[RMDB]
RNA sequence: GGGAACGACUCGAGUAGAGUCGAAAAGAUAUGGAAACUGACGAAGUGCUGGUCGAUGAAACUCGUCGGAAACGACGAGUGGAGACCUGCAUCGAAGUUUCCUAAGUCAAAUCGGAGUUCGCUCCGACCAGGAGGUAUUGUUCGCAAUACCUCCUGGAAAAGAAACAACAACAACAAC
Reactivity to DMS in 0.01 (KOAc 150mM, MgCl2 10mM, bicine 150mM(pH8.5), 24C), signal-to-noise 3, nucleotides 027 to 126: g000a040u000a300u000g000g010a000a010a030c000u000g000a280c200g000a100a110g030u000g010c020u010g010g000u000c000g010a180u020g000a150a240a000c000u000c000g040u000c000g000g000a080a080a230c010g000a010c010g000a020g000u000g010g000a020g010a010c000c000u010g020c020a020u000c020g010a300a030g000u000u000u000c000c000u000a040a140g010u010c030a050a150a180u000c000g010g020a030g000u010u000c300g000c010u000c010c000g000a040
Reactivity to 2A3 in 0.01 (KOAc 150mM, MgCl2 10mM, bicine 150mM(pH8.5), 24C), signal-to-noise 3, nucleotides 027 to 126: g010a000u140a050u130g000g000a020a020a030c000u070g300a220c120g120a290a060g160u060g070c070u050g030g010u030c030g280a300u050g000a020a000a020c010u000c000g000u020c000g010g040a110a120a010c010g000a000c000g000a010g000u010g010g010a000g020a010c000c000u000g000c000a030u050c010g000a000a000g000u010u000u000c000c000u030a150a050g060u010c020a030a060a180u060c000g030g000a000g000u110u130c200g070c090u020c020c000g010a030
Structure probing data (DMS and 2A3) for a 177-nucleotide construct. It was measured as part of the RMDB library TTRDES. For DMS the reverse transcriptase was MarathonRT. The DMS profile rests on 2,193 reads. Conditions: 150 mM KOAc, 10 mM MgCl2 and 150 mM bicine (pH 8.5), 24 C.